[RMDB]
RNA sequence: GGGAACGACUCGAGUAGAGUCGAAAAGGGAUAAGAGAGUACUCUUAUCCCCACGUCGUUGGUGACAACGACGAUUAUCCGGUGGCCACCCGCCCUGGCCACCGUUACUCCACUCCACUCCUUCGGGACUGGUUUGGAGGAACAUAACAGGGCCAAACGAUUAGCGAUUAUUCGUAAUCGCUAAUCGAAAAGAAACAACAACAACAAC
Reactivity to 2A3 in 0.01 (KOAc 150mM, MgCl2 10mM, bicine 150mM(pH8.5), 24C), signal-to-noise 2, nucleotides 027 to 156: g010g000g000a000u000a000a010g020a000g030a030g220u270a260c020u000c000u000u000a010u010c010c010c000c000a130c020g010u000c000g030u000u000g000g030u040g020a040c000a000a000c000g010a010c010g000a000u090u120a060u130c060c000g010g000u000g000g000c000c020a050c030c070c040g000c000c000c000u010g000g000c000c000a000c000c000g000u000u070a010c000u000c000c000a000c010u000c000c000a000c000u000c000c030u000u110c220g040g000g000a000c000u000g000g000u000u000u000g000g000a000g010g010a040a020c030a030u180a070a080c050a040g000g030g000c010c000a030a080a010
Structure probing data (2A3) for a 207-nucleotide construct. Values cover nucleotides 27 to 156.